[RMDB]
RNA sequence: GGGAACGACUCGAGUAGAGUCGAAAAAGCAUCGGUACGCCGAUGCAAUGGGGUCAAAUUGACUCUAGUAGGGAGUCCCUGCAUUCAAUAUGGCGACUUCCUAACAGAGUCAGGCUGACUCCUUUAAACUAUCCCAGAUCUUCGGAUCUGGGAUAGUAAAAGAAACAACAACAACAAC
Reactivity to 2A3 in 0.01 (KOAc 150mM, MgCl2 10mM, bicine 150mM(pH8.5), 24C), signal-to-noise 3, nucleotides 027 to 126: a020g000c010a010u000c000g030g000u050a050c270g030c050c000g000a000u000g000c000a000a010u020g000g010g000g000u000c000a010a000a020u030u000g000a000c000u000c020u030a050g020u000a000g010g010g000a000g020u010c020c000c010u000g050c050a100u030u280c050a050a110u090a080u300g020g030c140g000a010c000u020u000c000c000u000a010a010c010a010g010a000g000u000c000a000g000g010c030u000g000a000c000u000c000c000u010u030u010a020a000
Reactivity to DMS in 0.01 (KOAc 150mM, MgCl2 10mM, bicine 150mM(pH8.5), 24C), signal-to-noise 2, nucleotides 027 to 126: a090g000c000a000u000c010g060g050u010a060c240g000c000c000g050a000u000g000c020a000a010u020g000g000g000g020u010c000a010a130a300u070u000g010a000c000u020c000u010a100g000u000a000g000g000g050a010g010u020c030c000c030u000g000c300a020u070u050c290a100a100u010a070u000g040g000c270g000a010c000u000u000c000c000u000a030a040c030a010g000a000g000u010c000a000g000g020c300u000g030a020c000u000c000c000u000u000u000a020a130